[RMDB]
RNA sequence: GGGAACGACUCGAGUAGAGUCGAAAAGAUAUGGAUUAUCAAUACUCGCUUGGAUUUACAGAUCGGAAACGAUCUGUUGUCAGCGAGAUUGAGUAAUCCUAAGUCAAAAGCAUACUUCGGUAUGCAAUCUAAAUUAAUUCUUCGGAAUUAAUUUAGAAAAAGAAACAACAACAACAAC
Reactivity to 2A3 in 0.01 (KOAc 150mM, MgCl2 10mM, bicine 150mM(pH8.5), 24C), signal-to-noise 3, nucleotides 027 to 126: g040a020u110a040u230g000g000a000u000u000a000u020c010a010a010u130a300c000u000c010g020c020u070u300g250g010a070u300u210u150a020c000a000g020a000u020c010g010g080a060a110a050c000g010a000u000c010u000g000u010u010g000u000c000a000g010c020g000a000g000a000u000u000g010a010g010u040a000a000u000c000c000u000a120a030g060u000c040a000a050a150a080g010c000a000u010a000c000u030u100c270g110g000u000a000u000g000c010a000a010
Reactivity to DMS in 0.01 (KOAc 150mM, MgCl2 10mM, bicine 150mM(pH8.5), 24C), signal-to-noise 3, nucleotides 027 to 126: g000a060u010a300u000g010g010a020u000u000a010u010c000a020a010u000a150c000u000c000g020c000u000u000g020g010a020u020u010u000a010c000a000g010a020u000c000g000g000a150a100a270c000g010a010u000c000u000g010u000u000g010u000c010a020g010c010g010a010g020a030u000u000g000a050g010u010a000a020u000c000c010u000a030a160g010u000c050a100a090a150a160g010c000a000u000a010c000u000u010c230g020g000u010a010u000g000c010a060a080